[RMDB]
RNA sequence: GGGAACGACUCGAGUAGAGUCGAAAAGAUAUGGAUGGAGCUGAAAAAAUUGCCAUGGGUCGGAAACGACCCACUAGGCAUAUUAGCAGCGUUGAAAUCCUAAGUCAAAGUGCCGUUCGCGGCACAAGCUAUGAAAAAUGUUCGCAUUUUUCAUAGCAAAAGAAACAACAACAACAAC
Reactivity to DMS in 0.01 (KOAc 150mM, MgCl2 10mM, bicine 150mM(pH8.5), 24C), signal-to-noise 3, nucleotides 027 to 126: g000a060u000a300u010g000g000a010u000g000g000a140g010c000u020g000a010a020a060a060a150a160u010u000g000c000c000a190u000g000g000g010u000c000g000g010a110a060a210c000g010a010c000c000c000a000c130u000a090g010g020c000a020u000a030u000u000a120g000c000a010g010c000g000u000u020g000a140a100a040u000c010c000u010a060a150g000u000c050a070a130a120g000u000g020c000c000g020u010u000c170g020c010g020g000c000a000c010a020a060
Reactivity to 2A3 in 0.01 (KOAc 150mM, MgCl2 10mM, bicine 150mM(pH8.5), 24C), signal-to-noise 3, nucleotides 027 to 126: g030a020u060a040u140g020g000a000u000g000g070a030g030c010u040g040a130a020a000a070a110a160u110u060g000c010c000a020u010g000g010g000u000c010g010g020a050a050a090c010g000a000c000c000c010a010c010u030a030g010g010c000a010u010a010u030u010a070g040c010a000g010c020g040u120u050g020a050a050a010u020c000c000u020a150a010g020u020c040a160a080a020g000u000g000c000c000g040u060u090c300g000c020g130g010c000a010c000a000a010

About this RNA:
Chemical mapping of a 177-nucleotide RNA with DMS and 2A3. Conditions: 150 mM KOAc, 10 mM MgCl2 and 150 mM bicine (pH 8.5), 24 C. For DMS, 3,725 sequencing reads were counted. The data come from the RNA Mapping Database (RMDB), library TTRDEL.